[RMDB]
RNA sequence: GGGAACGACUCGAGUAGAGUCGAAAAGAUAGAAAGGCUAAGCACCUCGCAAUGAUAAGGUGGGACUUUUCCUUCUGGAACCAAGCGGUUGGUUCCGAGGGGGGUGUGAUCCAGGUACCGCCGUAGACAUUAACGUACCCUUCGGGGUACGUUAAUGAAAAGAAACAACAACAACAAC
Reactivity to DMS in 0.01 (KOAc 150mM, MgCl2 10mM, bicine 150mM(pH8.5), 24C), signal-to-noise 2, nucleotides 027 to 126: g000a150u010a080g000a040a070a060g000g020c010u000a090a170g000c090a060c010c010u000c070g000c130a110a080u020g000a090u010a040a050g000g020u000g000g000g000a060c030u000u000u000u010c000c010u020u000c030u010g040g000a010a030c000c010a000a070g010c230g000g010u000u010g030g000u000u000c000c000g010a030g000g010g010g000g000g050u020g020u000g000a080u010c040c050a070g000g010u010a060c020c020g000c040c060g000u000a050g000a180
Reactivity to 2A3 in 0.01 (KOAc 150mM, MgCl2 10mM, bicine 150mM(pH8.5), 24C), signal-to-noise 2, nucleotides 027 to 126: g000a020u140a050g140a050a150a000g000g010c040u070a000a030g050c010a020c020c010u050c010g050c070a070a190u140g060a080u120a110a120g020g010u040g030g040g000a040c020u050u070u050u050c000c000u000u000c120u170g000g010a000a000c000c000a020a020g160c100g290g100u020u060g000g020u040u010c020c000g020a000g050g000g020g000g010g010u020g080u070g050a040u070c060c000a000g070g000u050a030c010c020g020c010c020g000u010a050g040a060
The record gives the reactivity of an RNA of 177 nucleotides to DMS and 2A3. The 2A3 profile rests on 1,264 reads. DMS adducts were read by reverse transcription with MarathonRT. The reactions ran in a buffer of 150 mM KOAc, 10 mM MgCl2 and 150 mM bicine (pH 8.5), at 24 C. Source: RMDB library VIROID, as collected in RNAgym.